[RMDB]
This 177-nucleotide RNA was probed chemically with DMS and 2A3.
It was measured as part of the RMDB library TTRDEL.
2A3 adducts were read by reverse transcription with SuperScript II with manganese.
DMS adducts were read by reverse transcription with MarathonRT.
The DMS profile rests on 6,282 reads.

RNA sequence: GGGAACGACUCGAGUAGAGUCGAAAAGAUAUGGACCGACCCAGGGAUAACAGGCGUUGAAAUCGGAAACGAUGGAGCCUGCUAAUACCUGCGGUCCUAAGUCAAAAGCUUUGGUUCGCCAAAGCAAGUAAGAUAGUUGGUUCGCCAACUAUCUUACAAAAGAAACAACAACAACAAC
Reactivity to DMS in 0.01 (KOAc 150mM, MgCl2 10mM, bicine 150mM(pH8.5), 24C), signal-to-noise 6, nucleotides 027 to 126: g010a020u000a300u000g010g000a010c010c000g000a220c200c290c060a030g000g000g010a120u010a070a110c010a020g000g000c010g020u000u010g020a080a130a030u000c000g020g000a150a100a170c010g000a010u000g000g000a150g010c000c000u000g010c010u010a070a060u000a100c010c000u000g000c030g000g000u000c000c000u010a020a090g010u000c040a110a080a090a110g000c000u000u000u000g000g000u000u010c210g020c000c000a010a010a010g010c000a030a050
Reactivity to 2A3 in 0.01 (KOAc 150mM, MgCl2 10mM, bicine 150mM(pH8.5), 24C), signal-to-noise 3, nucleotides 027 to 126: g010a000u060a030u150g000g000a000c000c010g050a080c160c130c020a000g010g000g000a000u030a040a030c010a000g020g000c040g240u300u070g030a060a050a010u000c010g020g030a060a040a030c010g010a000u000g000g000a000g000c010c000u000g000c000u010a050a050u140a160c000c000u020g000c010g000g000u000c000c000u000a080a020g040u000c040a090a020a090a080g000c010u000u000u020g020g030u040u130c270g030c080c020a000a000a000g000c000a000a010